[RMDB]
RNA sequence: GGGAACGACUCGAGUAGAGUCGAAAAGAUAUGGAUCGUUGCUUUUGACGCGUGAGGCAUCGGAAACGAUGCGUAGCGCGAUAAGCACCGAUCCUAAGUCAAAGUCGGAAAGUUCGCUUUCCGACAAUCCGAAAGAUAGGUUCGCCUAUCUUUCGGAAAAAGAAACAACAACAACAAC
Reactivity to 2A3 in 0.01 (KOAc 150mM, MgCl2 10mM, bicine 150mM(pH8.5), 24C), signal-to-noise 3, nucleotides 027 to 126: g030a030u050a030u150g010g000a000u000c000g020u000u010g000c010u100u120u100u260g280a140c060g020c000g030u050g000a080g100g040c000a000u010c010g020g020a080a040a040c020g000a010u000g000c000g000u010a000g000c000g010c000g010a010u000a000a000g000c000a000c000c000g000a010u000c000c000u000a030a000g000u000c060a190a040a000g010u000c000g000g030a010a000a020g020u070u200c300g070c190u000u010u000c000c000g000a010c000a000a020
Reactivity to DMS in 0.01 (KOAc 150mM, MgCl2 10mM, bicine 150mM(pH8.5), 24C), signal-to-noise 4, nucleotides 027 to 126: g000a030u010a300u020g000g000a010u000c000g010u010u010g010c000u000u000u000u000g010a170c110g010c000g020u000g000a210g010g000c000a010u000c000g010g000a110a070a200c010g020a000u000g000c010g020u000a300g010c010g010c000g030a050u000a010a020g010c000a010c050c000g000a010u010c000c000u000a010a070g010u000c020a090a060a120g000u000c000g000g010a020a010a010g010u000u010c210g020c000u000u000u000c000c010g020a000c000a020a050